[RMDB]
RNA sequence: GGGAACGACUCGAGUAGAGUCGAAAACAAGAAGACACUCAGAACAGCUAUAGGUGGGAGAUUAUUAUGGGAACGAGAAUUGAUUACAUUAACUCUCUUAAUGUUCCAUUAUAUAGUGAUGGAAAUAACGGAUCAUGCGUUUCGACGCAUGAUCCGUAAAAGAAACAACAACAACAAC
Reactivity to 2A3 in 0.01 (KOAc 150mM, MgCl2 10mM, bicine 150mM(pH8.5), 24C), signal-to-noise 1, nucleotides 027 to 126: c090a020a010g140a000a130g090a120c060a000c080u010c000a000g060a050a000c000a000g050c020u020a000u000a050g000g010u000g020g020g000a000g080a000u000u000a000u010u000a120u120g110g000g000a230a000c040g020a030g150a060a020u020u000g150a090u070u170a090c000a070u150u000a000a000c000u000c090u210c000u000u110a000a000u280g170u000u000c000c000a000u230u120a180u000a000u030a080g120u120g200a010u060g000g110a020a020a020u240a000
Background:
Chemical mapping of a 177-nucleotide RNA with 2A3. The 2A3 profile rests on 465 reads.